[RMDB]
RNA sequence: GGGAACGACUCGAGUAGAGUCGAAAAUUCAUAUCUGCUAAAACCCGGUGCAUUCAUCAAUGCAGGUUAAGCCAAAGGGAUGUCCCGACCGGAGGCCGACAAUCCAGGGAACCGGAUGUCAUCACGUAAAACCGUCAGUUCUUCGGAACUGACGGAACAACUACCUUAUCUUCGGAUAAGGUAGUUGAAAAGAAACAACAACAACAAC
Reactivity to DMS in 0.01 (KOAc 150mM, MgCl2 10mM, bicine 150mM(pH8.5), 24C), signal-to-noise 2, nucleotides 027 to 156: u010u000c050a090u000a080u000c020u010g010c040u000a100a090a050a100c030c020c070g070g170u000g000c020a060u000u000c050a090u050c060a150a300u000g000c020a050g000g000u000u010a120a120g000c020c020a020a300a220g000g030g020a050u010g000u000c020c000c000g000a060c000c020g010g020a300g000g030c000c020g000a080c080a050a100u010c000c020a070g000g040g020a100a100c050c020g030g010a050u000g000u000c030a150u000c070a040c090g020u020a060a020a060a100c000c020g000u000c000a030g020u010u000c000u000u030c200g060g000a050a000c000u010g000a000c010g000g010a040a020
Reactivity to 2A3 in 0.01 (KOAc 150mM, MgCl2 10mM, bicine 150mM(pH8.5), 24C), signal-to-noise 4, nucleotides 027 to 156: u070u020c000a050u070a130u190c060u100g010c050u110a090a090a120a150c030c040c010g060g040u100g030c070a100u020u240c020a060u070c060a090a120u120g020c020a010g040g010u040u050a030a010g000c000c020a020a020a020g030g000g000a020u030g040u040c000c000c000g000a010c000c000g000g000a000g000g000c020c000g000a000c010a090a140u080c060c060a050g070g040g040a050a080c050c030g020g020a020u070g030u010c040a080u050c040a030c150g090u130a030a080a050a110c010c010g000u000c010a000g000u000u010c010u020u110c160g080g000a000a000c000u010g010a000c000g000g000a000a000